[RMDB]
Source: RMDB library TTRINS, as collected in RNAgym. The record gives the reactivity of an RNA of 177 nucleotides to DMS. The reactions ran in a buffer of 150 mM KOAc, 10 mM MgCl2 and 150 mM bicine (pH 8.5), at 24 C. DMS adducts were read by reverse transcription with MarathonRT. The DMS profile rests on 1,115 reads.
RNA sequence: GGGAACGACUCGAGUAGAGUCGAAAAGAUAUGGAUCUAAAGCAUAUACUCAUAUGGACAUGUCCGAAUAUUCGGAAACGAAUAUGGACAACAGCCAUGAUGAGUAUAUGCUUUAGAUCCUAAGUCACACGUUAAGACACUUCGGUGUCUUAACGUGAAAAGAAACAACAACAACAAC
Reactivity to DMS in 0.01 (KOAc 150mM, MgCl2 10mM, bicine 150mM(pH8.5), 24C), signal-to-noise 1, nucleotides 027 to 126: g000a010u000a300u060g020g000a000u000c000u000a030a030a000g020c000a000u000a020u010a000c020u000c000a000u000a040u010g000g000a050c130a250u000g010u000c000c040g000a050a060u000a010u000u000c000g020g000a120a120a150c010g000a020a010u000a020u020g000g000a050c000a020a050c300a150g010c000c000a020u000g010a000u000g000a010g010u000a000u000a000u000g010c000u000u010u000a000g000a000u020c000c000u020a000a050g010u000c020a300